RNA sequence: GGGAACGACUCGAGUAGAGUCGAAAAUAUGCCCCUAGAGGCGUACAGAUGGGGCUGCUGUGCCUCAUUUGUGUCAUAUGGUGGCAUAGAGCAAAAGGCUAUGUCUACGCUCGGUGUUCUCAGUCCACACACUUACUUGGUUCGCCAAGUAAGUGUGAAAAGAAACAACAACAACAAC
Reactivity to DMS in 0.01 (KOAc 150mM, MgCl2 10mM, bicine 150mM(pH8.5), 24C), signal-to-noise 2, nucleotides 027 to 126: u000a030u010g000c020c000c020c020u000a030g000a170g010g000c030g000u020a030c000a000g000a010u010g020g010g010g020c010u010g020c290u010g000u010g000c000c010u000c000a010u000u000u000g010u000g000u000c040a060u000a160u000g010g030u000g000g010c000a010u000a010g000a070g020c060a040a090a120a100g010g000c000u040a130u020g020u000c020u010a090c300g010c010u000c020g010g000u010g000u010u010c020u000c010a130g000u000c100c120a200
Reactivity to 2A3 in 0.01 (KOAc 150mM, MgCl2 10mM, bicine 150mM(pH8.5), 24C), signal-to-noise 3, nucleotides 027 to 126: u030a010u000g000c000c000c000c000u000a040g030a140g250g000c080g070u120a030c000a000g000a020u010g010g000g020g000c030u080g100c090u140g100u270g010c000c000u000c000a010u030u010u000g020u010g010u010c000a010u040a010u200g060g020u150g020g000c010a000u000a020g060a010g000c050a000a090a140a090g150g000c030u100a050u300g070u000c020u030a030c040g000c000u000c010g020g000u000g000u020u000c010u000c000a020g100u050c090c040a060